Structure probing data (2A3 and DMS) for a 207-nucleotide construct. Values cover nucleotides 27 to 156. For 2A3, 1,213 sequencing reads were counted. Conditions: 150 mM KOAc, 10 mM MgCl2 and 150 mM bicine (pH 8.5), 24 C. 2A3 adducts were read by reverse transcription with SuperScript II with manganese.
RNA sequence: GGGAACGACUCGAGUAGAGUCGAAAAGCUUUUCUGGGAAAUACGUUGUCUGCUAUUUCAAAAUGCCCUCCAUCUGAAUAAUGUAACCUGAAAUUCAUUCAACUCAUAUUUAGCACUUUAGGCCAUAUCCAGGGUUGUGGAAGGUGUACGUAAGCAAACUAAUAUGGUACUUCGGUACCAUAUUAGUAAAAGAAACAACAACAACAAC
Reactivity to 2A3 in 0.01 (KOAc 150mM, MgCl2 10mM, bicine 150mM(pH8.5), 24C), signal-to-noise 3, nucleotides 027 to 156: g050c010u090u090u090u120c130u140g020g000g050a020a060a010u130a060c040g010u030u030g040u060c060u020g040c030u030a070u050u150u080c070a080a080a110a110u210g030c020c000c000u000c000c020a110u090c030u050g020a050a040u120a140a050u080g050u030a060a040c020c000u020g050a060a090a050u160u090c040a030u120u070c030a110a070c020u020c110a030u090a140u180u140u070a050g030c030a020c070u000u010u070a030g010g010c010c010a010u020a010u050c030c040a030g100g000g000u090u040g020u030g010g030a020a050g030g000u030g040u050a020c050g000u050a000a020g070c060a070a110
Reactivity to DMS in 0.01 (KOAc 150mM, MgCl2 10mM, bicine 150mM(pH8.5), 24C), signal-to-noise 2, nucleotides 027 to 156: g020c030u000u010u010u000c030u020g020g030g000a090a080a120u010a130c070g000u000u000g010u000c030u000g040c020u000a120u000u010u010c020a030a060a100a110u000g020c020c010c030u000c030c020a070u010c040u000g010a040a070u010a070a080u000g000u000a080a030c020c020u010g010a050a060a140u010u010c050a110u000u010c070a070a030c030u000c030a110u000a130u000u000u000a080g020c010a030c060u000u000u000a030g050g020c030c040a070u010a080u000c030c030a080g030g030g020u000u010g010u010g020g000a070a130g010g050u020g000u000a020c080g000u010a090a110g030c060a100a090